[RMDB]
RNA sequence: GGGAACGACUCGAGUAGAGUCGAAAAGAUAUGGAUGACUGUUAGAUUCGAAGAACAAUAUCGGAAACGAUAUUGGGAGAAUUUAAUUCAUCCUAAGUCAAAACGCACCGUCUUCGGACGGUGCGAAUCUAAGAUUAUUGUUCGCAAUAAUCUUAGAAAAAGAAACAACAACAACAAC
Reactivity to DMS in 0.01 (KOAc 150mM, MgCl2 10mM, bicine 150mM(pH8.5), 24C), signal-to-noise 5, nucleotides 027 to 126: g010a050u000a300u010g000g010a000u000g010a020c300u010g010u000u000a010g010a020u000u000c010g000a140a090g000a140a100c000a000a000u000a010u000c010g010g000a070a110a150c010g020a000u000a000u000u000g000g000g010a060g010a020a010u000u000u000a020a030u000u010c000a020u000c000c000u010a030a120g010u000c020a060a090a120a180c030g010c000a010c000c000g010u000c010u000u020c280g020g000a010c030g020g030u010g010c000g000a020a030
Reactivity to 2A3 in 0.01 (KOAc 150mM, MgCl2 10mM, bicine 150mM(pH8.5), 24C), signal-to-noise 4, nucleotides 027 to 126: g020a020u050a030u130g000g010a010u010g020a050c230u240g080u280u110a070g030a100u000u030c050g160a300a010g000a060a010c000a000a010u000a000u010c000g010g010a030a030a030c010g000a010u000a000u010u000g010g030g000a040g000a020a020u060u090u050a050a050u080u050c000a010u000c010c000u020a120a020g040u020c030a020a060a050a130c030g010c010a010c040c010g010u030c000u070u120c300g180g000a000c030g000g000u010g020c010g000a000a010
Source: RMDB library TTRDES, as collected in RNAgym.
Structure probing data (DMS and 2A3) for a 177-nucleotide construct.
For DMS the reverse transcriptase was MarathonRT.
Values cover nucleotides 27 to 126.